Overview:
This 177-nucleotide RNA was probed chemically with 2A3 and DMS. For DMS the reverse transcriptase was MarathonRT. The data come from the RNA Mapping Database (RMDB), library OK2TRN.

RNA sequence: GGGAACGACUCGAGUAGAGUCGAAAAACACUAUCUCUAAGCUUUAAACCUUCUCCCUUAUUAAUAAACUGGAACUUAUAGUGUGAAGAAGAAUUAACUGCAAACAUACCAAUAAGGUCAUUACCAAUAUUAAAAUACGUUUCGACGUAUUUUAAUAAAAAGAAACAACAACAACAAC
Reactivity to 2A3 in 0.01 (KOAc 150mM, MgCl2 10mM, bicine 150mM(pH8.5), 24C), signal-to-noise 2, nucleotides 027 to 126: a010c050a010c050u060a060u050c050u000c020u060a120a020g000c010u180u050u110a090a150a120c000c000u110u060c030u030c030c000c000u030u110a180u150u040a130a140u120a070a090a030c070u030g060g020a020a020c010u090u040a020u000a070g090u060g000u040g100a080a100g050a030a010g000a050a080u130u070a130a080c060u030g000c020a060a110a090c010a050u060a030c010c000a030a130u090a130a000g010g020u060c010a020u070u090a070c010c000a030a000
Reactivity to DMS in 0.01 (KOAc 150mM, MgCl2 10mM, bicine 150mM(pH8.5), 24C), signal-to-noise 3, nucleotides 027 to 126: a070c070a070c050u000a040u010c040u000c050u010a130a120g030c040u000u010u000a060a100a140c060c040u000u000c040u000c010c000c020u000u020a110u020u010a070a090u020a020a090a080c110u000g000g010a040a070c070u000u000a010u010a130g020u000g020u000g010a090a100g000a110a050g020a130a080u010u010a060a120c100u010g000c120a080a100a100c050a050u000a040c060c040a050a050u000a020a040g010g020u000c050a050u010u000a170c050c050a040a180